[RMDB]
This 207-nucleotide RNA was probed chemically with 2A3 and DMS. For DMS the reverse transcriptase was MarathonRT. Conditions: 150 mM KOAc, 10 mM MgCl2 and 150 mM bicine (pH 8.5), 24 C. It was measured as part of the RMDB library OK3TST. The DMS profile rests on 2,691 reads. Values cover nucleotides 27 to 156.
RNA sequence: GGGAACGACUCGAGUAGAGUCGAAAAUGUGGGGCGAUGGAAUCCUCGAGAGUGACUUGAUAAUACCAGUCACACUGGCGGGACCACGAAGCAACCACAAUCGGAGACCUGGGUACAAGACACAAAACCAGGGCCCAUGGGACGAAGGUCGGGUAGACUAUAAAUCAGGUUUCGACCUGAUUUAUAGAAAAGAAACAACAACAACAAC
Reactivity to 2A3 in 0.01 (KOAc 150mM, MgCl2 10mM, bicine 150mM(pH8.5), 24C), signal-to-noise 1, nucleotides 027 to 156: u080g000u000g000g000g000g010c020g030a090u020g000g030a070a100u040c010c040u040c080g040a020g000a000g010u000g000a000c000u050u030g030a050u130a240a060u140a180c030c030a010g000u000c010a000c010a030c010u030g040g040c100g000g010g000a000c000c000a010c030g030a080a030g020c040a070a150c030c000a020c000a040a030u060c070g060g010a060g040a120c010c000u000g010g000g000u070a110c070a050a090g080a120c080a030c040a170a120a040a060c000c010a010g000g030g000c000c000c000a010u070g040g000g000a040c070g060a090a030g010g030u110c060g030g000g000u020a040g020a090
Reactivity to DMS in 0.01 (KOAc 150mM, MgCl2 10mM, bicine 150mM(pH8.5), 24C), signal-to-noise 2, nucleotides 027 to 156: u040g020u010g030g050g020g090c050g000a120u000g020g020a080a240u000c000c000u000c040g010a010g010a210g040u000g010a070c020u010u010g000a110u010a120a100u000a300c050c020a030g020u010c000a050c040a080c000u000g060g060c200g030g060g000a080c000c010a060c100g010a100a160g020c020a050a070c010c000a070c050a050a120u000c060g000g000a120g010a060c000c000u000g030g010g000u000a090c140a140a120g020a150c030a150c100a100a050a110a040c010c030a030g020g010g000c000c030c010a090u000g010g000g030a120c000g000a150a150g000g000u000c000g000g020g010u010a140g000a190